This 177-nucleotide RNA was probed chemically with DMS and 2A3. 2A3 adducts were read by reverse transcription with SuperScript II with manganese. The reactions ran in a buffer of 150 mM KOAc, 10 mM MgCl2 and 150 mM bicine (pH 8.5), at 24 C. For DMS the reverse transcriptase was MarathonRT. The DMS profile rests on 3,946 reads. It was measured as part of the RMDB library 15KREP.

RNA sequence: GGGAACGACUCGAGUAGAGUCGAAAAACAGACAACUCUGCUAACACUAAAGUUCUUAGGAACAAGGGUGUUGAUUAUACUAAGAAGUUUCUUACAGUUGACGGUGUGCAAUAUUAUUGCUACACGUGAAUAAACCUAUGUUCGCAUAGGUUUAUUCAAAAGAAACAACAACAACAAC
Reactivity to DMS in 0.01 (KOAc 150mM, MgCl2 10mM, bicine 150mM(pH8.5), 24C), signal-to-noise 4, nucleotides 027 to 126: a120c040a020g000a070c120a090a080c160u010c040u000g000c090u000a050a010c010a020c010u000a060a150a190g000u000u000c010u000u010a130g030g010a010a010c010a070a180g000g000g010u000g010u000u000g010a080u020u010a090u000a090c100u020a060a050g020a050a220g010u000u000u000c000u000u010a090c170a100g000u000u000g000a090c070g000g010u000g020u000g000c010a010a010u000a110u000u010a080u000u000g010c010u020a020c010a040c010g020u000
Reactivity to 2A3 in 0.01 (KOAc 150mM, MgCl2 10mM, bicine 150mM(pH8.5), 24C), signal-to-noise 3, nucleotides 027 to 126: a000c020a020g070a020c030a030a060c100u040c040u100g080c040u060a000a000c000a010c010u050a110a090a060g000u000u040c010u040u080a140g000g120a020a010c000a030a030g210g000g000u020g000u010u000g000a020u010u190a130u040a140c090u090a060a050g060a130a030g070u030u020u020c000u040u090a090c060a060g020u050u040g150a030c050g100g040u010g010u010g010c010a010a010u110a120u300u130a040u080u000g000c010u030a010c020a000c010g020u040